The record gives the reactivity of an RNA of 177 nucleotides to DMS.
The RNA was probed in 150 mM KOAc, 10 mM MgCl2 and 150 mM bicine (pH 8.5) at 24 C.
Values are in units of 0.01, from 0 to 300, in steps of 10.
RNA sequence: GGGAACGACUCGAGUAGAGUCGAAAAUCAAGGAGAAGGAACGGUAGAAAAGAGCGAGCCUCUCGAUACGAAAGGGCCGCGAGCCUAUCGAGUUUGGAGUCAUCCGGGCCGAAGGGUUGAGACGCACCAGACAGAAGUACUUCGGUACUUCUGUCUGAAAAGAAACAACAACAACAAC
Reactivity to DMS in 0.01 (KOAc 150mM, MgCl2 10mM, bicine 150mM(pH8.5), 24C), signal-to-noise 1, nucleotides 027 to 126: u000c070a040a190g000g010a040g020a100a030g000g000a080a070c040g000g000u000a020g010a130a030a120a120g000a250g010c070g010a070g000c060c020u010c000u000c030g000a050u000a080c170g020a010a050a160g010g020g010c040c000g060c150g010a170g020c110c020u000a070u010c020g000a110g030u000u000u000g020g000a090g000u000c120a030u000c030c000g010g000g000c020c000g020a070a270g010g000g010u000u000g020a060g000a090c140g020c080a150c110